The record gives the reactivity of an RNA of 207 nucleotides to 2A3 and DMS. The reactions ran in a buffer of 150 mM KOAc, 10 mM MgCl2 and 150 mM bicine (pH 8.5), at 24 C. The data come from the RNA Mapping Database (RMDB), library OK3TST. For 2A3, 4,159 sequencing reads were counted.

[RMDB]
RNA sequence: GGGAACGACUCGAGUAGAGUCGAAAACAUGGCGUGCGAACGUCCUUGAUGAGUUUACAAAUGAGCUUCUGCCGACUUUUAAGAAGGCUGGGCUGGUAUCCGAGCUCGUCGUUACACAGUCCAAUCUCGAUGAUAACGCCCAGAUCAGCCAAAUGCGGAAGAGUAAAUUAUUCGUAAUUUACUCUUCAAAAGAAACAACAACAACAAC
Reactivity to 2A3 in 0.01 (KOAc 150mM, MgCl2 10mM, bicine 150mM(pH8.5), 24C), signal-to-noise 6, nucleotides 027 to 156: c040a050u100g000g000c020g020u060g010c040g070a080a020c000g060u100c000c040u080u080g020a090u070g010a020g090u090u130u090a080c060a070a200a100u150g010a030g020c020u080u060c050u170g020c050c010g040a050c020u080u130u080u180a140a110g050a040a020g040g000c000u010g010g000g000c010u020g000g020u050a040u050c120c060g010a020g050c080u070c090g040u030c000g010u100u050a040c140a010c030a080g040u010c030c010a050a110u020c020u010c030g100a110u090g010a040u040a090a020c040g030c010c000c000a010g030a090u070c010a010g000c030c010a040a080a190u220g060c110g070
Reactivity to DMS in 0.01 (KOAc 150mM, MgCl2 10mM, bicine 150mM(pH8.5), 24C), signal-to-noise 2, nucleotides 027 to 156: c070a110u000g020g000c000g030u020g030c170g010a170a060c020g000u000c030c010u060u020g020a100u000g010a110g020u000u000u000a160c000a090a110a100u010g010a070g000c040u000u010c070u060g000c030c000g000a120c030u000u000u000u020a040a230g030a090a150g010g010c060u000g000g010g010c010u000g020g000u000a050u000c060c040g000a110g020c030u000c050g020u000c040g010u010u000a080c040a090c040a110g000u000c030c060a030a130u000c010u000c040g000a140u000g000a110u000a040a100c050g020c020c000c000a110g010a050u000c020a040g030c010c010a100a080a110u010g020c040g000